[RMDB]
RNA sequence: GGGAACGACUCGAGUAGAGUCGAAAAGCUGACUGGUCGUCGUCGACGAAGGCUCGUCAGCUGCGGAGGUUGGGGUCGACUGGCCUCCGGUGGCGAAGCUGAGUUGAGCUUCGCUCUUCUCUUCUUACUUGAUUAUCUAGUUCGCUAGAUAAUCAAGAAAAGAAACAACAACAACAAC
Reactivity to 2A3 in 0.01 (KOAc 150mM, MgCl2 10mM, bicine 150mM(pH8.5), 24C), signal-to-noise 6, nucleotides 027 to 126: g000c000u000g000a000c010u030g030g000u010c010g010u000c010g060u140c150g090a300c070g010a080a030g020g000c010u000c020g000u000c000a000g000c000u010g000c010g000g010a010g020g020u030u050g040g020g020g200u220c100g130a230c040u010g010g000c000c000u000c010c000g020g030u070g000g000c000g000a000a000g000c010u090g060a070g300u250u180g160a010g000c000u020u000c000g000c000u010c000u010u000c010u000c000u040u010c010u020u020a040
Reactivity to DMS in 0.01 (KOAc 150mM, MgCl2 10mM, bicine 150mM(pH8.5), 24C), signal-to-noise 7, nucleotides 027 to 126: g020c000u000g000a010c000u000g010g020u000c000g000u000c010g010u010c300g010a170c060g010a030a050g000g000c010u000c300g010u000c000a010g010c010u000g010c010g000g000a020g000g020u000u000g000g010g000g020u010c250g010a140c010u000g000g000c000c000u000c010c000g000g020u000g010g000c000g000a020a010g010c000u000g010a190g020u010u010g000a040g000c000u000u000c020g010c000u000c050u000u000c010u000c020u010u010c040u010u000a290